[RMDB]
Record summary: Structure probing data (DMS and 2A3) for a 177-nucleotide construct. For DMS the reverse transcriptase was MarathonRT. For 2A3, 845 sequencing reads were counted. For 2A3 the reverse transcriptase was SuperScript II with manganese. The data come from the RNA Mapping Database (RMDB), library OK2TST. The DMS profile rests on 1,462 reads. The reactions ran in a buffer of 150 mM KOAc, 10 mM MgCl2 and 150 mM bicine (pH 8.5), at 24 C.

RNA sequence: GGGAACGACUCGAGUAGAGUCGAAAAUCAUAUUCUUUCGUCAACAGGGAUUUAGCUGUCAUGACUAAAUUCUCAGGGCUAUUAUCGGGAUAGAUGAAAUUCGUCAGAGGGGCAUCAGUGAGCAGCGCCCUCCAAGAAGUUUCGACUUCUUGGAGGGAAAAGAAACAACAACAACAAC
Reactivity to DMS in 0.01 (KOAc 150mM, MgCl2 10mM, bicine 150mM(pH8.5), 24C), signal-to-noise 2, nucleotides 027 to 126: u020c070a080u000a100u010u000c060u000u000u010c120g040u020c060a050a100c160a130g020g010g020a040u000u010u000a030g010c000u010g000u010c280a100u000g000a100c040u020a030a000a010u010u000c040u010c060a120g010g000g030c050u000a050u000u000a030u010c110g030g000g010a060u000a050g000a050u010g000a040a060a110u000u000c080g000u010c040a060g020a090g010g020g000g020c020a050u000c120a040g000u000g020a050g020c070a050g000c090g010
Reactivity to 2A3 in 0.01 (KOAc 150mM, MgCl2 10mM, bicine 150mM(pH8.5), 24C), signal-to-noise 2, nucleotides 027 to 126: u020c020a030u080a060u220u060c010u080u080u080c090g080u000c020a040a100c030a200g050g000g050a040u040u030u010a020g030c010u070g200u300c100a140u140g110a130c000u010a000a010a050u050u000c030u100c070a080g000g010g080c010u040a050u140u070a060u140c010g060g040g010a030u020a100g020a030u070g110a070a080a100u070u050c050g060u050c050a030g050a060g100g020g000g010c000a020u040c010a100g080u080g100a030g060c030a000g000c010g010